Chemical mapping of a 177-nucleotide RNA with DMS and 2A3. For 2A3 the reverse transcriptase was SuperScript II with manganese. Reactivities are given for positions 27 through 126. The data come from the RNA Mapping Database (RMDB), library RFM100. For DMS, 4,586 sequencing reads were counted.
[RMDB]
RNA sequence: GGGAACGACUCGAGUAGAGUCGAAAAAAUAGUAGAAGGACGUUAAGCAUUUAUCAUUGAACUAUAAUUGUUCAUUGAAGUCAUUGAUGCAAACUCCUUGGUCACACACACAUACGGCGCGGAAGGCUUUUCAAAAGGCCUUCGGGCCUUUUGAAAAAAAAGAAACAACAACAACAAC
Reactivity to DMS in 0.01 (KOAc 150mM, MgCl2 10mM, bicine 150mM(pH8.5), 24C), signal-to-noise 3, nucleotides 027 to 126: a040a070u020a100g010u030a070g000a020a020g000g000a010c240g020u010u000a100a170g000c010a020u010u010u020a070u000c000a020u000u000g000a010a020c000u020a090u050a080a120u060u000g010u000u000c000a010u000u000g000a010a070g000u010c270a080u020u020g000a010u000g020c030a100a050a050c020u000c010c010u000u000g010g020u010c060a080c090a070c100a060c140a060c040a080u020a070c160g000g010c030g000c020g010g000a020a040g000g000c060
Reactivity to 2A3 in 0.01 (KOAc 150mM, MgCl2 10mM, bicine 150mM(pH8.5), 24C), signal-to-noise 3, nucleotides 027 to 126: a000a000u180a040g090u070a060g030a100a010g010g010a000c140g040u010u020a140a060g000c000a000u040u080u040a130u050c020a000u000u000g020a020a020c080u080a050u220a300a160u180u200g000u000u000c000a000u020u020g000a010a020g050u040c100a120u140u170g030a030u010g000c040a040a030a050c000u000c000c000u000u000g040g000u090c010a040c000a010c000a000c000a000c000a090u110a150c130g000g000c040g010c040g090g020a000a050g090g030c010